[RMDB]
RNA sequence: GGGAACGACUCGAGUAGAGUCGAAAAGUUCGUUGCAAGUUCCCGAAAGGAUCCGUAGGACGGAGAUGCCUUGUAACCGAAUUUAACUAGGGGGAAUCAUUAUAAUGGAGUCAGUCGUUCGCGACUGGACUAAACGAUAGUUCGCUAUCGUUUAGUCAAAAGAAACAACAACAACAAC
Reactivity to DMS in 0.01 (KOAc 150mM, MgCl2 10mM, bicine 150mM(pH8.5), 24C), signal-to-noise 9, nucleotides 027 to 126: g020u000u000c020g020u010u000g010c040a050a070g010u000u000c050c000c010g020a110a100a160g010g000a090u000c020c020g010u000a150g020g040a300c030g010g000a050g010a130u010g010c160c010u000u000g010u000a030a050c090c040g010a030a040u000u000u000a060a130c080u000a140g010g000g010g010g010a170a070u010c080a060u010u010a100u010a090a080u000g010g000a090g010u010c010a010g000u000c010g010u000u010c200g020c020g010a030c030u000g000
Reactivity to 2A3 in 0.01 (KOAc 150mM, MgCl2 10mM, bicine 150mM(pH8.5), 24C), signal-to-noise 7, nucleotides 027 to 126: g010u010u010c010g010u030u020g010c010a030a010g010u040u060c010c020c000g010a060a050a010g060g010a030u030c030c030g040u150a100g170g180a030c020g020g010a040g020a050u140g060c000c010u000u000g000u010a010a000c060c050g010a020a020u030u060u040a160a090c080u150a160g000g000g000g010g060a020a050u060c030a020u060u250a090u130a200a140u110g050g010a040g070u060c010a000g000u020c010g010u040u080c170g000c010g070a000c000u000g030